[RMDB]
RNA sequence: GGGAACGACUCGAGUAGAGUCGAAAAGGCGUUCGUCGACUGGAUGGUCGAGCAGAUCCGCGAACAGAUCGGCGUCAACCUGGCGACGCUGCAGGAACUGCUCGAAAACCUCGAGGUUCCGAGUCUCGGCGAACUGCUCGCCGCGCUGAACGGCACCUCUAUGUUGUCUUUUCGAAGACAACAUAGAAAAAGAAACAACAACAACAAC
Reactivity to DMS in 0.01 (KOAc 150mM, MgCl2 10mM, bicine 150mM(pH8.5), 24C), signal-to-noise 2, nucleotides 027 to 156: g000g020c010g020u010u000c030g000u000c010g010a080c040u000g030g020a080u010g000g000u000c020g000a070g020c020a040g000a080u000c010c030g020c060g030a070a070c040a050g000a060u000c000g020g040c010g040u000c020a090a170c160c100u010g080g010c030g010a030c010g010c040u000g000c050a100g020g030a050a120c010u010g000c020u000c010g000a010a050a060a100c070c050u010c060g010a120g010g020u000u000c040c020g000a110g020u000c040u000c010g010g000c000g000a020a060c030u010g030c030u000c030g020c030c010g020c070g020c200u000g000a110a050c030g000g000c000a200c090c020
Reactivity to 2A3 in 0.01 (KOAc 150mM, MgCl2 10mM, bicine 150mM(pH8.5), 24C), signal-to-noise 6, nucleotides 027 to 156: g030g000c000g000u010u010c000g000u000c000g010a020c020u040g030g040a080u130g110g070u040c000g010a000g000c000a010g000a060u020c020c010g050c100g100a110a040c060a070g080a140u210c020g000g020c000g000u000c010a130a200c050c170u130g110g020c070g010a000c000g000c020u030g010c050a030g020g000a020a060c000u010g000c010u000c000g010a020a020a020a030c010c010u060c070g070a110g050g080u090u010c070c010g000a010g020u010c040u020c050g000g000c000g000a010a010c030u090g000c000u020c020g000c000c000g000c020g000c070u090g020a150a010c000g010g000c000a020c000c010